[RMDB]
RNA sequence: GGGAACGACUCGAGUAGAGUCGAAAACACGGCGGUGGGCACGCUCUUCACAACAGCACCCACUUUGGCCAGAACGGGCUCCUGGACGACGGUGGUGGUGGCGGGAGCGCUGUAGACCAGAGGAGCACCAGCUCCUACGUUUCGACGUAGGAGCUGGAAAAGAAACAACAACAACAAC
Reactivity to DMS in 0.01 (KOAc 150mM, MgCl2 10mM, bicine 150mM(pH8.5), 24C), signal-to-noise 2, nucleotides 027 to 126: c130a150c100g010g000c070g000g050u000g000g000g010c230a180c260g020c050u000c000u020u010c260a040c140a140a100c300a000g010c090a100c000c000c020a020c050u010u020u030g010g000c000c000a100g030a080a020c040g020g020g000c020u060c040c000u000g000g020a060c120g000a000c080g010g030u010g010g010u030g020g000u000g010g010c000g000g000g000a030g000c040g000c000u000g000u000a130g000a130c010c010a080g030a060g030g030a120g000c100a280
Reactivity to 2A3 in 0.01 (KOAc 150mM, MgCl2 10mM, bicine 150mM(pH8.5), 24C), signal-to-noise 2, nucleotides 027 to 126: c070a010c000g000g020c020g040g000u010g000g000g120c070a080c210g040c020u000c000u130u100c020a100c030a170a140c020a050g070c010a070c000c050c000a000c000u020u030u070g060g000c000c010a020g040a080a010c060g030g030g020c040u010c000c010u020g070g000a020c070g000a020c030g060g070u090g080g030u040g000g160u080g030g040c040g000g020g000a040g010c080g000c020u050g030u050a020g020a070c010c030a030g000a070g020g020a010g020c000a030
Structure probing data (DMS and 2A3) for a 177-nucleotide construct. For DMS the reverse transcriptase was MarathonRT. Values cover nucleotides 27 to 126. 2A3 adducts were read by reverse transcription with SuperScript II with manganese. It was measured as part of the RMDB library OK1LIB. In probing experiments dimethyl sulfate is read out at A N1 and C N3, which are open when not base-paired.